[RMDB]
RNA sequence: GGGAACGACUCGAGUAGAGUCGAAAAGAAGGUUCAAAUGCAAUCCGGUGCAUAAAGCAUCCAUUUUUCUUCUCGAAUUGGGAGCUAAAAGACUGGGUGAUAGGAUGAGGGUUAUUUUUCACCCUUAGAGUAGAUGUGAGUUCGCUCACAUCUACUCAAAAGAAACAACAACAACAAC
Reactivity to DMS in 0.01 (KOAc 150mM, MgCl2 10mM, bicine 150mM(pH8.5), 24C), signal-to-noise 1, nucleotides 027 to 126: g000a120a050g000g010u010u000c160a070a100a060u010g000c040a140a090u000c040c050g010g010u000g050c070a040u000a030a100a150g020c010a030u000c020c020a020u000u010u020u020u000c060u010u010c140u020c070g000a040a070u010u000g000g010g000a060g020c070u000a030a100a130a130g010a030c010u000g000g000g010u000g000a090u000a110g000g000a040u000g010a030g000g000g000u000u010a060u000u000u000u000u000c120a080c010c000c010u000u000a080
Reactivity to 2A3 in 0.01 (KOAc 150mM, MgCl2 10mM, bicine 150mM(pH8.5), 24C), signal-to-noise 1, nucleotides 027 to 126: g070a080a000g090g000u060u100c070a030a090a090u110g000c040a060a050u060c050c020g020g030u040g080c040a020u100a020a260a010g000c000a020u000c000c000a050u110u060u000u020u060c010u060u120c110u000c060g010a050a000u100u010g020g030g010a000g050c020u120a080a130a000a070g060a010c060u090g000g030g020u020g030a040u060a100g160g100a070u090g010a070g050g000g000u080u000a130u130u140u040u110u090c040a050c040c000c050u000u020a040

About this RNA:
The record gives the reactivity of an RNA of 177 nucleotides to DMS and 2A3. Reactivities are rounded to 0.1 and cut off at 0 and 3. For DMS the reverse transcriptase was MarathonRT. 2A3 adducts were read by reverse transcription with SuperScript II with manganese. For 2A3, 800 sequencing reads were counted. The reactions ran in a buffer of 150 mM KOAc, 10 mM MgCl2 and 150 mM bicine (pH 8.5), at 24 C. For DMS, 1,068 sequencing reads were counted.